An RNA of 177 nucleotides, treated with 2A3 and read out base by base. The data come from the RNA Mapping Database (RMDB), library RFM100. For 2A3, 599 sequencing reads were counted.

[RMDB]
RNA sequence: GGGAACGACUCGAGUAGAGUCGAAAACAAUUUUGUCAUCGGGUAAGUAUCCUAUCGGGCUUUUUAGGCUGAUGACAUAAACUAUGAGGAGUACUGUUAAUGGCCCGUAUCGCUGGCAUUAACAUCCGCGUCAGAACGAGUUCGCUCGUUCUGACGCAAAAGAAACAACAACAACAAC
Reactivity to 2A3 in 0.01 (KOAc 150mM, MgCl2 10mM, bicine 150mM(pH8.5), 24C), signal-to-noise 2, nucleotides 027 to 126: c030a130a180u020u030u020u020g010u000c000a000u000c000g010g090g000u070a060a020g050u050a120u120c020c050u110a250u250c080g080g000g050c070u300u070u000u010u070a100g160g000c000u010g000a000u000g000a010c000a000u040a000a030a000c140u140a140u300g160a060g050g000a040g030u160a070c020u060g000u050u050a000a000u060g300g040c000c000c000g110u080a230u150c030g000c120u020g000g010c000a000u030u040a000a000c000a000u000c000c020